[RMDB]
RNA sequence: GGGAACGACUCGAGUAGAGUCGAAAAACGGCGGAUACGUCCGCCGAGCUCACUUUUCCGCUUCUAACUUCCAUUUGCAGAGUUCAAGUAAUCUGGAAAUGGAUUAGAAUCGUGGAAAAGUUAGUAACAUACUUAUUGAAUUCGUUCAAUAAGUAUGAAAAGAAACAACAACAACAAC
Reactivity to DMS in 0.01 (KOAc 150mM, MgCl2 10mM, bicine 150mM(pH8.5), 24C), signal-to-noise 8, nucleotides 027 to 126: a140c010g000g000c000g020g010a020u010a060c170g010u000c000c000g020c000c000g010a030g000c010u000c040a030c000u000u000u000u000c000c000g020c030u000u000c000u000a000a010c130u030u000c000c000a000u000u000u000g000c000a010g000a020g010u020u020c190a130a160g020u030a070a070u000c010u000g000g000a010a000a010u000g000g010a030u000u000a000g000a010a010u020c200g030u000g010g000a010a010a010a010g000u000u010a020g010u010a130a220
Reactivity to 2A3 in 0.01 (KOAc 150mM, MgCl2 10mM, bicine 150mM(pH8.5), 24C), signal-to-noise 9, nucleotides 027 to 126: a000c010g000g010c000g000g000a010u030a060c210g110u020c000c000g000c000c000g000a010g000c000u010c010a000c000u000u000u000u000c000c010g010c020u010u000c000u000a060a100c110u080u010c000c000a010u010u000u050g090c000a010g030a060g060u090u170c070a210a080g080u140a180a180u000c010u000g020g020a000a000a000u000g010g000a000u000u000a000g000a010a020u100c100g010u020g000g000a000a000a000a000g000u000u010a000g000u010a080a010